[RMDB]
RNA sequence: GGGAACGACUCGAGUAGAGUCGAAAAGAGGAGUCAUUCGUGACUCCUCAAAGCGAGCUCAACUCUCCCGCUCAAGUCCGAGAGCCUUCGGACCCAAAAGAAUGCUGUUCCUGUUCGCAGGAACAAACUUCCCUAACACCUUCGGGUGUUAGGGAAGAAAAGAAACAACAACAACAAC
Reactivity to 2A3 in 0.01 (KOAc 150mM, MgCl2 10mM, bicine 150mM(pH8.5), 24C), signal-to-noise 1, nucleotides 027 to 126: g000a010g000g000a000g010u000c010a030u140u130c180g140u070g010a000c000u000c010c010u020c000a000a000a000g000c000g010a020g090c000u010c080a000a070c040u020c000u010c100c000c000g000c050u040c080a050a010g050u060c000c010g020a000g000a180g300c080c050u080u010c000g010g000a010c000c000c010a100a140a030a080g140a180a050u160g090c140u050g030u000u000c000c000u000g030u030u030c260g000c060a000g000g000a000a030c020a000a010a000